The data come from the RNA Mapping Database (RMDB), library OK3TST.
Structure probing data (DMS and 2A3) for a 207-nucleotide construct.
2A3 adducts were read by reverse transcription with SuperScript II with manganese.
Values are in units of 0.01, from 0 to 300, in steps of 10.
For DMS, 2,792 sequencing reads were counted.
RNA sequence: GGGAACGACUCGAGUAGAGUCGAAAAGAUCAGUGAGACACCCUACUUCAGAAUACGGAUUACUACUUUUAUAUCAAGAUCGAGGAUUUCAAUUCAUCGCUCCGUGUUCACUGACUCGACUAGAUAUAUCCGUCUCACCUCUGAUCGUCCUUCUCAACAUGCUGCUAAUGUUCGCAUUAGCAGCAUGAAAAGAAACAACAACAACAAC
Reactivity to DMS in 0.01 (KOAc 150mM, MgCl2 10mM, bicine 150mM(pH8.5), 24C), signal-to-noise 2, nucleotides 027 to 156: g050a080u000c020a100g030u000g010a100g000a070c020a110c090c050c070u020a040c110u000u010c090a040g000a160a100u000a060c010g000g030a190u010u010a180c120u010a100c100u030u020u010u010a070u000a040u010c050a080a080g020a050u010c010g050a040g020g020a060u000u020u010c150a100a120u010u000c070a100u000c050g010c080u000c000c040g050u010g010u000u000c060a130c130u010g000a130c010u000c030g000a060c060u000a300g000a050u010a020u000a040u000c070c050g010u010c030u000c030a020c030c020u010c090u000g010a080u000c020g000u030c070c030u000u020c040u000c010a040a300
Reactivity to 2A3 in 0.01 (KOAc 150mM, MgCl2 10mM, bicine 150mM(pH8.5), 24C), signal-to-noise 7, nucleotides 027 to 156: g000a000u000c030a000g020u020g000a010g010a010c010a060c040c040c040u100a120c070u120u120c060a040g030a080a020u060a050c030g040g010a040u170u080a110c080u060a070c050u150u150u200u080a090u050a030u110c030a050a060g030a140u060c010g000a030g000g040a040u110u210u130c110a090a090u190u110c050a110u110c100g050c080u000c010c030g010u030g020u030u020c040a060c120u070g030a060c010u030c050g020a030c040u030a030g040a050u040a020u020a030u140c070c060g000u000c010u010c000a020c010c050u110c070u080g000a010u000c000g000u040c000c000u060u010c030u020c020a050a140

Annotation
Reactivities are given for positions 27 through 156. Conditions: 150 mM KOAc, 10 mM MgCl2 and 150 mM bicine (pH 8.5), 24 C.